[RMDB]
RNA sequence: GGGAACGACUCGAGUAGAGUCGAAAACAGUUCCGGAUCGUAACGCCCGGGAUAGACCUGCUUGACCCCGAGCAUGGUCGCCACGUACGGAGUGCCCCAGGCGUGGACAUGGAACAUCGGGGUGAUACGUGACUAGUACUUUCGAGUACUAGUCACGAAAAGAAACAACAACAACAAC
Reactivity to 2A3 in 0.01 (KOAc 150mM, MgCl2 10mM, bicine 150mM(pH8.5), 24C), signal-to-noise 4, nucleotides 027 to 126: c030a030g000u000u020c000c010g020g040a260u200c110g090u140a080a050c070g030c020c000c000g000g000g000a010u090a080g020a020c000c000u010g030c010u040u020g080a040c000c010c000c000g000a000g000c010a060u280g010g010u030c020g000c010c000a040c020g120u300a070c090g030g100a140g110u150g090c000c010c000c030a040g020g020c010g000u000g000g010a000c030a090u180g030g070a070a020c020a030u040c040g020g000g000g020u020g050a050u090a130
Reactivity to DMS in 0.01 (KOAc 150mM, MgCl2 10mM, bicine 150mM(pH8.5), 24C), signal-to-noise 3, nucleotides 027 to 126: c120a160g020u000u000c000c010g000g010a090u000c080g010u000a140a090c080g020c100c000c010g000g000g000a080u000a180g010a030c010c000u010g020c010u000u000g010a140c000c000c020c000g020a050g020c000a030u010g010g020u000c000g010c090c030a050c040g040u000a110c220g000g000a230g010u010g000c300c000c000c020a110g000g010c010g000u010g000g000a060c060a100u010g000g030a080a070c120a100u000c050g010g000g000g050u000g010a130u000a090

Overview:
The data come from the RNA Mapping Database (RMDB), library OK2TST. This 177-nucleotide RNA was probed chemically with 2A3 and DMS. For DMS the reverse transcriptase was MarathonRT. 2A3 adducts were read by reverse transcription with SuperScript II with manganese. For 2A3, 4,404 sequencing reads were counted.